[RMDB]
RNA sequence: GGGAACGACUCGAGUAGAGUCGAAAAAUUGCCAGGAAACAUCAGGAAUAGCCAUUUGGAAGAGUCAUCAGCCCUCCCACCAUCCGUUUUCUGUCUUGUCUUUUCCCUAUGAGCAGGGGAAAUUCCACGCUGGCCCCAAUCCCCAGUGCAGCGGCUCAAAUGCGAUCAAUUUCGAUUGAUCGCAUUUAAAAGAAACAACAACAACAAC
Reactivity to DMS in 0.01 (KOAc 150mM, MgCl2 10mM, bicine 150mM(pH8.5), 24C), signal-to-noise 1, nucleotides 027 to 156: a140u010u000g020c050c000a140g000g020a170a080a090c040a070u010c020a000g010g010a060a040u000a070g030c070c040a110u000u000u000g010g020a050a110g000a090g010u000c020a160u000c130a120g000c010c010c020u000c020c010c010a080c080c020a080u010c030c030g000u000u000u020u000c030u010g030u010c050u000u000g000u010c050u000u000u000u000c000c010c000u000a100u000g010a110g010c060a200g020g000g000g010a060a040a070u000u000c000c020a070c070g040c050u000g020g000c020c020c000c060a070a190u000c000c010c010c030a130g040u000g030c040a030g000c000g030g000c060u010c080
Reactivity to 2A3 in 0.01 (KOAc 150mM, MgCl2 10mM, bicine 150mM(pH8.5), 24C), signal-to-noise 1, nucleotides 027 to 156: a000u110u110g000c000c000a030g000g050a060a050a000c020a040u090c040a040g020g050a060a080u050a090g040c010c040a070u060u060u160g110g030a120a080g030a050g120u100c070a090u050c060a090g050c020c000c000u010c010c030c010a010c000c000a030u020c020c060g050u040u010u040u010c030u040g070u020c010u040u130g070u030c000u020u030u010u010c040c020c000u000a040u100g040a030g000c030a030g000g000g000g020a030a060a030u090u040c010c000a040c100g090c050u010g030g050c040c020c000c010a000a060u040c000c010c010c010a000g040u050g030c000a020g030c040g080g010c000u020c030

About this RNA: The record gives the reactivity of an RNA of 207 nucleotides to DMS and 2A3. It was measured as part of the RMDB library OK3TST. Reactivities are given for positions 27 through 156.